[RMDB]
RNA sequence: GGGAACGACUCGAGUAGAGUCGAAAAGCGCAAAUAGGACUGCGCCACCGGUGAGGCGUUGAACUGUGCGGCAGCCCCCGGAUCCGUCGCGUUGAGCGCAGCUACUACCUGCCCGUAAUUGCAGGUGAUCACCGUUCACUUUCGAGUGAACGGUGAUAAAAGAAACAACAACAACAAC
Reactivity to 2A3 in 0.01 (KOAc 150mM, MgCl2 10mM, bicine 150mM(pH8.5), 24C), signal-to-noise 2, nucleotides 027 to 126: g020c030g000c000a090a130a080u130a120g060g080a100c010u030g000c000g000c000c000a030c000c050g010g000u140g050a090g010g000c020g020u020u090g000a140a010c060u150g070u220g160c030g060g030c040a040g000c020c010c000c010c020g060g020a070u020c030c020g060u130c070g000c010g000u000u080g080a040g040c030g000c010a000g040c010u050a070c010u010a010c000c000u010g000c000c020c010g100u120a050a050u140u210g030c000a000g000g010u000g030
Reactivity to DMS in 0.01 (KOAc 150mM, MgCl2 10mM, bicine 150mM(pH8.5), 24C), signal-to-noise 2, nucleotides 027 to 126: g000c040g000c040a050a100a130u010a100g010g000a130c100u030g010c010g010c000c060a100c040c040g000g010u010g000a070g030g010c030g030u000u000g010a070a110c080u010g040u000g000c070g000g000c060a140g000c020c000c000c010c010g010g010a050u000c090c040g000u020c110g020c050g000u000u010g000a160g020c020g000c040a050g000c090u000a120c100u000a050c000c010u000g000c000c140c160g030u010a090a120u000u000g000c010a020g000g000u000g030

Record summary:
The record gives the reactivity of an RNA of 177 nucleotides to 2A3 and DMS. The RNA was probed in 150 mM KOAc, 10 mM MgCl2 and 150 mM bicine (pH 8.5) at 24 C. Values are in units of 0.01, from 0 to 300, in steps of 10. It was measured as part of the RMDB library OK2TST. The 2A3 profile rests on 1,398 reads.